[RMDB]
RNA sequence: GGGAACGACUCGAGUAGAGUCGAAAAGCCACAUAUCCCGUGACAUUGCGAAAGCAAGGCUGGCGGUAGGUAGUCCUGGGCGGCGACAGCCUUGGACUGCGGCGUAAAGGUGUACCUGGAGCCGUUAUAACGCGGUAACAGUUCGCUGUUACCGCAAGAAACACAUGAUCUUCGGAUCAUGUGUUUCAAAAGAAACAACAACAACAAC
Reactivity to DMS in 0.01 (KOAc 150mM, MgCl2 10mM, bicine 150mM(pH8.5), 24C), signal-to-noise 1, nucleotides 027 to 156: g020c010c000a060c080a120u000a160u000c040c000c000g000u000g010a030c040a150u010u000g000c030g070a140a140a240g000c010a040a030g000g010c020u000g000g040c000g030g020u000a040g080g000u010a030g030u000c000c000u000g000g020g000c020g000g000c060g020a070c070a150g050c000c010u010u000g000g020a050c000u000g010c030g040g000c060g010u010a120a070a150g000g010u000g020u000a080c030c040u000g010g010a300g010c010c000g010u000u000a040u000a120a100c140g000c010g020g000u000a010a050c000a040g020u000u000c150g010c030u000g000u000u000a010c000c010g000c000a000a010
Reactivity to 2A3 in 0.01 (KOAc 150mM, MgCl2 10mM, bicine 150mM(pH8.5), 24C), signal-to-noise 3, nucleotides 027 to 156: g010c010c000a050c020a040u130a030u120c000c020c000g040u040g020a060c080a280u040u040g000c000g080a150a040a010g010c020a010a020g070g040c070u060g020g000c040g020g020u050a060g000g080u040a010g000u010c000c000u000g000g010g000c010g010g050c060g090a030c070a050g010c000c010u010u000g000g010a000c020u000g040c010g000g000c000g060u120a030a050a020g020g020u150g070u200a220c000c010u000g000g010a010g000c000c010g000u030u050a110u050a130a040c090g000c000g010g000u000a000a000c000a010g010u070u070c110g040c140u000g000u000u000a000c000c000g000c000a000a010
Chemical mapping of a 207-nucleotide RNA with DMS and 2A3. It was measured as part of the RMDB library M2RFPK. As a SHAPE reagent, 2A3 marks flexible, mostly unpaired nucleotides at the ribose 2'-OH.